[RMDB]
RNA sequence: GGGAACGACUCGAGUAGAGUCGAAAACUCUCGAACGCCCCCCCGACCCUCGGAUGGGCCGCUUCCGGCAGGGAAGCCCGAAGGUGGGAGAGGGGGAGAACACUUCGAGAGUUGGGGGAUAGAAAGAGCAGCUAUCGCUUCGGCGAUAGCAAAAGAAACAACAACAACAAC
Reactivity to 2A3 in 0.01 (KOAc 150mM, MgCl2 10mM, bicine 150mM(pH8.5), 24C), signal-to-noise 2, nucleotides 027 to 129: c000u010c000u000c000g010a000a000c060g050c000c000c000c000c000c000c000g030a060c040c020c010u010c000g020g000a020u070g090g010g000c010c020g090c020u040u010c010c050g140g100c120a100g050g110g000a010a010g010c000c000c000g010a030a030g090g090u140g010g000g010a030g060a030g000g000g000g000g000a000g000a010a010c070a030c010u030u000c010g000a010g000a000g000u010u010g000g000g000g000g000a030u030a070g140a020a160a000g080a010g040c070a000
Reactivity to DMS in 0.01 (KOAc 150mM, MgCl2 10mM, bicine 150mM(pH8.5), 24C), signal-to-noise 6, nucleotides 027 to 129: c030u000c020u010c010g020a040a030c220g000c190c020c010c040c000c010c000g040a300c030c010c040u010c030g000g000a240u050g020g010g010c060c110g000c130u020u030c020c040g040g070c290a100g010g030g070a070a120g010c000c010c000g040a300a160g020g050u060g040g030g040a100g000a160g010g000g000g060g020a000g030a060a110c130a190c210u040u010c030g000a020g020a030g010u020u020g000g010g020g020g010a070u010a030g040a060a060a070g010a080g040c070a080